[RMDB]
RNA sequence: GGGAACGACUCGAGUAGAGUCGAAAAGAUCAAACGUAUCAAGAUAUGUAUCAAGCGUAUAGCCGUAUUUUUGAGAGAGUUGGCAUUAAUGCUAGACCAGUUGUAGCAGAUUCAGGUGCUAUAGGCGGAAAAGACGUUAUUUCGAUAACGUCUUUUCAAAAGAAACAACAACAACAAC
Reactivity to 2A3 in 0.01 (KOAc 150mM, MgCl2 10mM, bicine 150mM(pH8.5), 24C), signal-to-noise 5, nucleotides 027 to 126: g040a070u080c040a060a070a040c050g080u090a040u100c040a060a010g060a090u050a000u140g100u050a110u160c070a110a050g010c010g020u120a070u090a160g020c010c010g010u020a110u010u110u030u070u080g050a080g000a010g000a020g030u050u030g010g010c020a000u050u200a180a050u140g030c040u030a030g060a060c020c040a050g030u100u070g090u110a020g000c020a000g010a060u080u110c060a040g140g040u050g020c000u000a010u030a090g080g060c070g000
Reactivity to DMS in 0.01 (KOAc 150mM, MgCl2 10mM, bicine 150mM(pH8.5), 24C), signal-to-noise 9, nucleotides 027 to 126: g010a120u010c040a060a060a050c080g010u010a090u000c040a080a080g010a060u000a030u000g010u000a130u010c160a100a120g010c040g020u010a060u000a090g000c050c060g010u000a010u000u000u000u000u000g010a050g000a140g010a090g010u000u000g010g000c050a060u010u000a080a090u000g010c030u010a060g010a120c040c050a110g010u010u000g010u000a040g000c030a040g010a140u000u010c150a080g000g020u000g010c020u000a020u000a040g010g020c090g010
Structure probing data (2A3 and DMS) for a 177-nucleotide construct. The reactions ran in a buffer of 150 mM KOAc, 10 mM MgCl2 and 150 mM bicine (pH 8.5), at 24 C.